[RMDB]
Source: RMDB library OK3TST, as collected in RNAgym. Structure probing data (2A3) for a 207-nucleotide construct. The RNA was probed in 150 mM KOAc, 10 mM MgCl2 and 150 mM bicine (pH 8.5) at 24 C. Values cover nucleotides 27 to 156.
RNA sequence: GGGAACGACUCGAGUAGAGUCGAAAAUGGGCUCUUUGUGUGCUGUUGCAUUCUUUGAAUGCCGAGGUGGCAUUUGAUUGAUAAUUUCGUUACGCCUCGAACAUGGCCCACAAAAAACCAAGGAAAGCAAGACACACGCGGAACUUGGAAAACCGAACCUGACUUUUAUCUUCGGAUAAAAGUCAGGAAAAGAAACAACAACAACAAC
Reactivity to 2A3 in 0.01 (KOAc 150mM, MgCl2 10mM, bicine 150mM(pH8.5), 24C), signal-to-noise 1, nucleotides 027 to 156: u040g020g010g010c030u030c040u100u090u000g030u000g030u010g010c000u050g080u070u020g000c010a000u000u030c180u080u200u300g020a000a000u000g010c000c000g020a030g010g010u010g050g000c050a060u050u040u160g030a030u100u070g100a040u000a270a200u140u080u020c030g010u000u030a040c000g010c000c000u010c030g000a010a000c030a060u010g000g000c000c000c000a000c000a000a040a000a000a000a000c000c000a000a000g000g060a010a020a020g060c000a030a000g190a180c060a030c020a010c150g040c060g040g000a020a010c000u060u040g010g000a100a100a010a030c020c070g060a050a000